[RMDB]
RNA sequence: GGGAACGACUCGAGUAGAGUCGAAAAGUCAGGGGUAGCUUUCUGCGCUUUUCAAAAAUCGGAAGAAAUUUGUACCUUUUGAGACGAAGGUUUGUAUACCGAGGAACGUGUUUAAGCGGAUACCGCAUUACAGAUCAAAUUUCGAUUUGAUCUGUAAAAAAGAAACAACAACAACAAC
Reactivity to 2A3 in 0.01 (KOAc 150mM, MgCl2 10mM, bicine 150mM(pH8.5), 24C), signal-to-noise 6, nucleotides 027 to 126: g060u060c030a000g000g050g000g030u030a030g020c010u010u050u000c010u040g010c020g010c060u070u010u010u080c060a070a040a030a030a040u050c010g030g020a090a030g120a080a130a050u190u220u170g090u090a040c000c000u030u040u040u110g170a120g000a010c070g010a040a010g030g000u030u050u120g100u040a090u050a060c020c020g010a020g000g040a090a050c090g040u050g040u080u120u110a070a010g000c000g000g010a050u070a120c020c030g030c020a000
Reactivity to DMS in 0.01 (KOAc 150mM, MgCl2 10mM, bicine 150mM(pH8.5), 24C), signal-to-noise 9, nucleotides 027 to 126: g010u010c040a060g010g000g010g010u000a070g010c080u010u010u010c020u010g010c100g010c040u010u010u010u010c060a040a050a040a100a150u000c010g010g040a100a060g010a160a050a200u010u020u010g010u010a070c020c010u000u000u010u010g010a110g000a080c110g010a060a050g000g020u000u010u010g010u000a070u010a060c020c020g000a080g000g010a080a080c150g010u010g010u010u000u010a050a110g010c000g000g010a120u020a080c040c020g020c070a220
An RNA of 177 nucleotides, treated with 2A3 and DMS and read out base by base. 2A3 is a SHAPE reagent: it acylates the 2'-hydroxyl of flexible nucleotides of all four kinds. Conditions: 150 mM KOAc, 10 mM MgCl2 and 150 mM bicine (pH 8.5), 24 C.